RNA sequence: GGGAACGACUCGAGUAGAGUCGAAAAGUAAAACUAAUAUAUGCAAUGGUGAUGAGCGUAAGUCUCCUCUAUACCAAGUAUGUCAACAACUUACAGAUUCAAUCAACCAAAUACUUGGCCAUACCUCACCUGUUGAAGGUGUCGAUUUACCGUUAGCAAACGGUGACUGAUUCGUCAGUCACCGUUUAAAAGAAACAACAACAACAAC
Reactivity to 2A3 in 0.01 (KOAc 150mM, MgCl2 10mM, bicine 150mM(pH8.5), 24C), signal-to-noise 3, nucleotides 027 to 156: g060u100a040a060a020a060c070u090a110a120u160a070u020a060u150g000c020a030a040u040g010g000u060g020a050u030g010a040g000c040g060u070a080a010g100u060c000u000c020c020u010c020u110a100u040a030c000c000a000a000g050u040a000u070g110u150c060a040a030c040a050a050c190u080u200a040c040a060g150a260u150u220c040a040a090u080c020a050a120c080c010a100a100a010u040a010c020u000u020g000g000c000c040a050u070a090c010c010u010c010a000c000c000u020g060u070u140g090a050a000g030g010u020g010u020c010g010a010u010u080u150a070c030c040g020u000u060a060g000c030
Reactivity to DMS in 0.01 (KOAc 150mM, MgCl2 10mM, bicine 150mM(pH8.5), 24C), signal-to-noise 2, nucleotides 027 to 156: g020u020a070a080a070a180c080u000a030a120u010a140u000a100u020g010c070a080a180u000g000g020u020g020a090u000g000a130g020c090g000u000a070a140g010u000c040u000c050c030u000c030u020a130u000a090c010c050a050a120g020u000a020u000g000u000c080a070a060c100a060a070c030u000u000a220c100a120g020a140u010u010c060a130a070u000c090a090a070c020c070a050a120a050u000a050c020u000u000g000g000c040c040a100u000a070c010c040u000c030a020c000c020u030g010u000u010g020a100a120g010g020u000g010u000c020g020a170u010u000u000a080c020c050g000u000u000a120g000c190